[RMDB]
This 177-nucleotide RNA was probed chemically with DMS and 2A3.

RNA sequence: GGGAACGACUCGAGUAGAGUCGAAAAACGGCAAUGUUCGUCAGCCGUGGGUGAGUCGGUCCUAAGGUGGCCCGUAACUCGGCGCCGCCGAAAAGGGAAGCCGGUUAAUAUUCCGGCACCGCUGCCCUCCUUAUCAUAACUUCGGUUAUGAUAAGGAAAAAGAAACAACAACAACAAC
Reactivity to DMS in 0.01 (KOAc 150mM, MgCl2 10mM, bicine 150mM(pH8.5), 24C), signal-to-noise 8, nucleotides 027 to 126: a040c000g010g010c010a090a070u030g010u020u010c110g010u020c090a120g000c000c000g010u010g010g000g020u010g010a020g010u020c000g010g000u010c000c000u000a100a200g010g050u000g010g010c010c000c000g000u030a280a130c300u020c000g000g010c250g010c010c000g020c000c000g010a020a060a150a060g000g000g010a110a110g010c000c000g020g010u000u010a130a100u030a230u030u010c000c010g000g020c000a050c030c030g000c030u010g000c010c010c000
Reactivity to 2A3 in 0.01 (KOAc 150mM, MgCl2 10mM, bicine 150mM(pH8.5), 24C), signal-to-noise 9, nucleotides 027 to 126: a000c020g000g010c080a090a090u070g020u120u120c100g080u100c080a140g230c050c010g010u040g000g020g000u130g130a030g030u250c020g010g010u020c000c000u020a070a030g000g000u010g010g000c000c000c000g030u070a100a080c060u010c100g010g000c160g000c010c000g000c000c000g000a030a050a010a000g010g010g020a120a020g000c000c010g010g020u040u070a130a070u080a130u190u070c000c000g000g000c000a010c000c010g000c010u030g000c000c000c000
Annotation:
DMS adducts were read by reverse transcription with MarathonRT. The data come from the RNA Mapping Database (RMDB), libraries RFM100 and RFMREP. 2A3 adducts were read by reverse transcription with SuperScript II with manganese. The RNA was probed in 150 mM KOAc, 10 mM MgCl2 and 150 mM bicine (pH 8.5) at 24 C.